[RMDB]
RNA sequence: GGGAACGACUCGAGUAGAGUCGAAAAGAUAUGGAUACAUUGCAGCGACGAUCGUACGUAACAUCUAUGGGUCUUUCGGAAACGAAAGACCCAUAGUGGUACGGGAGCUGCUAUGUAUCCUAAGUCAUCGUGAUAUAUCGUUCGCGAUAUAUCACGAAAAAGAAACAACAACAACAAC
Reactivity to DMS in 0.01 (KOAc 150mM, MgCl2 10mM, bicine 150mM(pH8.5), 24C), signal-to-noise 3, nucleotides 027 to 126: g000a020u000a110u020g000g000a010u000a010c000a000u000u010g000c000a000g010c000g000a120c300g000a030u010c000g000u000a010c000g010u010a150a220c300a100u020c000u000a000u000g000g000g010u000c000u000u000u000c010g010g000a040a020a090c000g000a010a000a010g000a000c020c000c000a000u000a000g020u010g020g000u000a010c000g010g000g000a010g010c000u000g030c000u000a000u000g000u000a010u010c000c000u000a010a070g000u000c020a180